[RMDB]
RNA sequence: GGGAACGACUCGAGUAGAGUCGAAAAACUAACGAAAAAACUCAUGACAUUAUUCGUGGUGGCUUAGACCGUUCACCAAUGUAUACCGGUGUUAUUGAAGGGGUAGGUCCACGUUACUGUCCUUCAAGGACUAAAUACCAUUCGUGGUAUUUAGUCCAAAAGAAACAACAACAACAAC
Reactivity to 2A3 in 0.01 (KOAc 150mM, MgCl2 10mM, bicine 150mM(pH8.5), 24C), signal-to-noise 6, nucleotides 027 to 126: a000c030u070a040a060c060g110a080a040a000a050a030a050c080u100c140a100u160g030a010c010a030u040u080a070u200u120c010g000u010g040g020u050g060g000c000u030u020a050g080a150c000c000g040u050u050c010a010c030c010a050a060u160g130u150a100u090a130c070c070g000g020u030g040u120u070a150u070u150g090a100a040g020g010g010g020u030a020g010g030u040c010c010a010c010g000u010u020a010c030u020g040u020c020c000u080u110c040a080a050
Reactivity to DMS in 0.01 (KOAc 150mM, MgCl2 10mM, bicine 150mM(pH8.5), 24C), signal-to-noise 5, nucleotides 027 to 126: a090c090u010a080a120c130g010a010a060a080a050a060a070c150u000c090a070u010g010a070c060a050u000u000a090u000u010c030g040u000g010g010u000g010g010c040u000u010a050g000a070c060c050g000u000u010c010a050c030c010a040a060u000g030u000a120u010a100c230c120g010g020u000g030u010u000a090u020u010g020a090a060g010g000g000g010u000a040g000g010u000c020c040a070c060g020u000u000a030c080u010g000u000c000c090u000u010c140a060a160